[RMDB]
RNA sequence: GGGAACGACUCGAGUAGAGUCGAAAAGAGGCAGCAGAAAGUACUAAGGUUGAUGUAGCAUUGGCAGAUGAUGGGACAGUGAAUUCGGAUGAUGAAGACUUCUUUUCGGGAGACACGAGAAGCCCAGUCUUAUCGGGAUUUUCGAAUCCCGAUAAGAAAAAGAAACAACAACAACAAC
Reactivity to 2A3 in 0.01 (KOAc 150mM, MgCl2 10mM, bicine 150mM(pH8.5), 24C), signal-to-noise 1, nucleotides 027 to 126: g030a030g000g000c010a020g000c000a010g050a040a060a010g030u070a050c060u060a100a070g090g000u040u040g040a090u070g060u080a010g060c040a070u000u070g010g010c010a030g030a070u060g000a030u050g000g000g020a000c050a040g040u010g090a060a030u050u120c070g050g010a020u040g000a010u060g030a110a040g070a030c020u070u040c000u010u130u010u010c050g120g000g000a080g010a020c070a010c020g060a040g000a030a020g000c030c000c010a010g010
Reactivity to DMS in 0.01 (KOAc 150mM, MgCl2 10mM, bicine 150mM(pH8.5), 24C), signal-to-noise 3, nucleotides 027 to 126: g020a110g020g020c040a050g020c040a090g010a070a110a110g010u000a050c080u010a110a070g010g010u000u010g010a080u000g020u010a060g010c050a060u000u000g010g000c040a060g010a080u010g010a060u000g010g000g000a080c090a070g000u000g020a040a110u010u000c060g010g010a070u000g000a080u000g010a080a090g010a080c060u000u000c020u000u000u010u000c040g000g000g020a110g000a090c110a050c050g000a060g000a080a100g000c020c010c020a130g000